[RMDB]
RNA sequence: GGGAACGACUCGAGUAGAGUCGAAAAGUUUACUGAGGACGAAGCUGCAGAUCUCAGACAGCAAUGGCAAGACAGGUACCCGAAGAUCGUGCAUUCAGCCAGGGGCGGCAACGGCCGGGAGACGCCACUACCCUCUGAAUUUCGAUUCAGAGGGUAGAAAAGAAACAACAACAACAAC
Reactivity to DMS in 0.01 (KOAc 150mM, MgCl2 10mM, bicine 150mM(pH8.5), 24C), signal-to-noise 5, nucleotides 027 to 126: g000u000u010u010a100c040u000g010a070g000g010a060c060g010a100a110g000c070u000g020c050a140g010a080u000c040u000c070a090g020a110c090a070g000c070a080a080u010g020g000c050a070a090g030a060c090a070g000g010u000a090c020c020c020g010a080a100g010a050u000c080g010u010g000c060a090u000u000c120a090g000c010c040a080g000g000g010g010c070g010g000c070a050a070c070g010g010c030c040g000g000g010a100g010a100c100g010c040c060a190
Reactivity to 2A3 in 0.01 (KOAc 150mM, MgCl2 10mM, bicine 150mM(pH8.5), 24C), signal-to-noise 3, nucleotides 027 to 126: g010u040u050u070a130c030u050g010a060g060g030a020c030g040a070a000g020c070u090g030c040a050g030a170u040c040u010c020a040g050a240c010a000g020c030a050a150u070g050g000c030a060a060g040a060c030a040g020g130u110a110c000c000c000g010a040a020g020a080u080c050g020u040g010c020a060u040u200c030a020g010c040c000a050g020g020g030g010c030g000g000c020a070a040c060g010g000c000c000g010g000g000a040g000a020c030g000c000c000a010
Structure probing data (DMS and 2A3) for a 177-nucleotide construct. For 2A3 the reverse transcriptase was SuperScript II with manganese. Values cover nucleotides 27 to 126.